[RMDB]
RNA sequence: GGGAACGACUCGAGUAGAGUCGAAAAAGGAAGUCCGGAGACGCCGGCGGGGGCCUCGGGAAGAGUUAUCUUUUCUGCUUAACGGCCUGCCAACCCUGGAAUCGGUUCAGCCGGAGGUAGGGUCCAGAAUACAUUCCUUAUUCGUAAGGAAUGUAUUAAAAGAAACAACAACAACAAC
Reactivity to DMS in 0.01 (KOAc 150mM, MgCl2 10mM, bicine 150mM(pH8.5), 24C), signal-to-noise 9, nucleotides 027 to 126: a090g000g000a120a070g000u010c020c030g000g000a110g010a090c300g010c040c020g000g020c090g000g000g000g000g000c020c020u010c130g000g000g010a030a030g010a060g020u030u050a070u020c010u000u000u000u010c030u010g010c190u020u030a100a130c170g000g000c000c020u010g000c030c040a080a200c030c020c030u000g000g010a090a080u010c060g000g010u010u020c100a130g010c010c010g010g000a080g000g010u020a060g010g000g010u010c040c040a110g010
Reactivity to 2A3 in 0.01 (KOAc 150mM, MgCl2 10mM, bicine 150mM(pH8.5), 24C), signal-to-noise 9, nucleotides 027 to 126: a010g090g020a030a030g060u020c010c000g020g010a060g010a030c060g020c030c010g020g010c040g030g010g000g010g000c000c020u030c030g030g000g010a030a030g040a020g060u140u150a180u150c010u040u050u060u030c030u040g120c030u060u030a090a030c040g020g000c000c000u050g070c010c020a050a060c030c000c000u020g050g060a050a060u110c040g020g000u090u090c050a050g030c020c010g010g010a010g010g030u100a030g020g020g000u040c030c010a020g080

Chemical mapping of a 177-nucleotide RNA with DMS and 2A3. High 2A3 reactivity points to a flexible backbone, as in loops and unpaired stretches. Source: RMDB libraries RFM100 and RFMREP, as collected in RNAgym. Values cover nucleotides 27 to 126. Conditions: 150 mM KOAc, 10 mM MgCl2 and 150 mM bicine (pH 8.5), 24 C. DMS adducts were read by reverse transcription with MarathonRT.